[RMDB]
RNA sequence: GGGAACGACUCGAGUAGAGUCGAAAAAGGACAAGAAGGUCCUUGUGAAGGAUAUUCUUGAACCCGUUGUGGAUUCCAAGUACUCGGUGAAGCAGACCUUCACGGCGAACAAGGAUGCGAAAGCGAGUCUCAUCGGAUACAUUGGAGCAAAGCCAAACAUGUUAGCGUCUUUCGAGACGCUAACAUGAAAAGAAACAACAACAACAAC
Reactivity to DMS in 0.01 (KOAc 150mM, MgCl2 10mM, bicine 150mM(pH8.5), 24C), signal-to-noise 1, nucleotides 027 to 156: a010g010g000a300c000a040a020g000a030a030g000g070u010c000c010u000u000g030u000g020a080a070g030g000a050u010a070u000u010c000u010u000g000a070a190c030c000c010g030u000u000g030u020g020g040a200u010u000c010c010a000a070g020u000a040c040u000c000g000g020u000g010a090a070g020c040a200g010a260c000c000u000u000c040a010c110g000g000c090g000a090a210c120a150a070g000g000a190u000g010c000g030a050a030a140g010c050g010a300g000u000c000u000c030a060u000c000g010g010a100u000a040c010a150u010u000g010g000a070g080c110a050a080a150g000c010c000a080a050a300
Reactivity to 2A3 in 0.01 (KOAc 150mM, MgCl2 10mM, bicine 150mM(pH8.5), 24C), signal-to-noise 2, nucleotides 027 to 156: a000g080g000a040c000a040a010g020a030a010g070g000u030c020c000u050u100g300u110g100a060a010g000g000a010u020a040u050u000c000u000u020g060a130a130c020c020c010g000u020u030g030u070g040g020a120u140u000c000c000a000a000g010u020a000c000u000c010g030g060u030g030a060a000g040c070a070g020a300c000c000u030u020c070a070c120g080g030c040g030a100a020c060a090a030g030g010a050u090g020c000g100a090a020a000g060c040g050a020g040u000c000u000c040a030u060c010g000g010a000u010a060c100a300u010u060g010g010a010g000c060a170a010a030g010c030c040a000a140a030